[RMDB]
Chemical mapping of a 177-nucleotide RNA with 2A3 and DMS. The reactions ran in a buffer of 150 mM KOAc, 10 mM MgCl2 and 150 mM bicine (pH 8.5), at 24 C. For DMS the reverse transcriptase was MarathonRT. Reactivities are given for positions 27 through 126. High DMS reactivity at an A or C suggests that its Watson-Crick edge is free. The 2A3 profile rests on 2,596 reads. 2A3 adducts were read by reverse transcription with SuperScript II with manganese.
RNA sequence: GGGAACGACUCGAGUAGAGUCGAAAAGCGUGCGUUUAUUUGUUUGGUCCCUGUGUGUUGGUAAAUGAAAUAAACUGGGCGGUGAGGAGUGUAGCCUGUAUAAGUGUAUAGGGGUGAGAGUCGUGCGGGAUAUAUAUAAUUUCGAUUAUAUAUAUCCAAAAGAAACAACAACAACAAC
Reactivity to 2A3 in 0.01 (KOAc 150mM, MgCl2 10mM, bicine 150mM(pH8.5), 24C), signal-to-noise 2, nucleotides 027 to 126: g030c010g000u040g000c020g020u010u040u050a060u030u090u050g070u010u020u080g030g000u070c020c000c000u020g030u000g010u010g000u020u070g030g040u040a010a040a060u100g070a010a030a060u110a000a070a010c010u010g020g000g000c000g000g010u000g010a020g010g010a010g000u020g000u020a010g010c000c000u010g010u020a090u030a030a040g000u010g000u020a030u070a090g020g000g010g000u040g030a060g000a000g040u030c010g000u010g040c000g050
Reactivity to DMS in 0.01 (KOAc 150mM, MgCl2 10mM, bicine 150mM(pH8.5), 24C), signal-to-noise 7, nucleotides 027 to 126: g020c050g010u010g010c080g010u000u010u010a030u020u010u010g010u010u010u010g020g010u010c010c020c010u010g010u010g020u010g010u000u000g010g000u010a050a070a080u020g010a050a060a060u010a050a050a060c050u010g010g010g010c050g000g020u010g010a100g000g000a070g010u000g010u010a110g000c030c010u010g010u010a050u010a070a110g010u010g010u000a060u010a080g010g010g000g010u000g010a100g000a050g010u010c030g010u000g010c130g010